[RMDB]
The record gives the reactivity of an RNA of 177 nucleotides to DMS and 2A3.
DMS adducts were read by reverse transcription with MarathonRT.
For 2A3 the reverse transcriptase was SuperScript II with manganese.
The reactions ran in a buffer of 150 mM KOAc, 10 mM MgCl2 and 150 mM bicine (pH 8.5), at 24 C.
For DMS, 6,408 sequencing reads were counted.
It was measured as part of the RMDB library OK2TST.

RNA sequence: GGGAACGACUCGAGUAGAGUCGAAAAUCUCCACGAUUCUUUCUGUGGUGUUCUUCUGUGAUCUGCUUGAGAAGAGGAGAACAUGAUGUACAUUUAGACCAUGGGAUGUGCCUCACCUCCAAGGGCCCAAUCUGCGUAGAUUCGUCUACGCAGAUUGAAAAGAAACAACAACAACAAC
Reactivity to DMS in 0.01 (KOAc 150mM, MgCl2 10mM, bicine 150mM(pH8.5), 24C), signal-to-noise 5, nucleotides 027 to 126: u000c040u010c010c030a090c090g000a080u010u010c120u010u010u010c040u010g030u000g010g000u000g010u000u000c020u010u000c010u010g000u000g000a200u000c020u010g020c220u010u000g010a040g000a300a110g000a070g010g000a020g010a030a050c090a080u000g000a050u010g020u000a050c050a060u000u000u010a080g000a060c160c080a060u000g000g000g010a030u000g020u000g000c010c030u010c050a070c070c020u000c030c060a080a110g010g010g000c030c050
Reactivity to 2A3 in 0.01 (KOAc 150mM, MgCl2 10mM, bicine 150mM(pH8.5), 24C), signal-to-noise 5, nucleotides 027 to 126: u020c020u000c010c010a050c070g080a110u190u070c050u100u190u010c050u230g070u060g040g010u020g010u000u000c010u020u000c010u030g300u040g110a100u010c010u100g120c150u260u230g040a030g010a100a040g070a020g030g000a000g000a020a010c000a030u080g050a060u040g050u050a040c040a080u060u080u090a090g020a080c020c030a050u050g040g020g000a030u020g010u020g020c000c010u030c020a050c000c010u000c030c010a050a100g070g020g000c000c030
The 2A3 profile rests on 5,874 reads.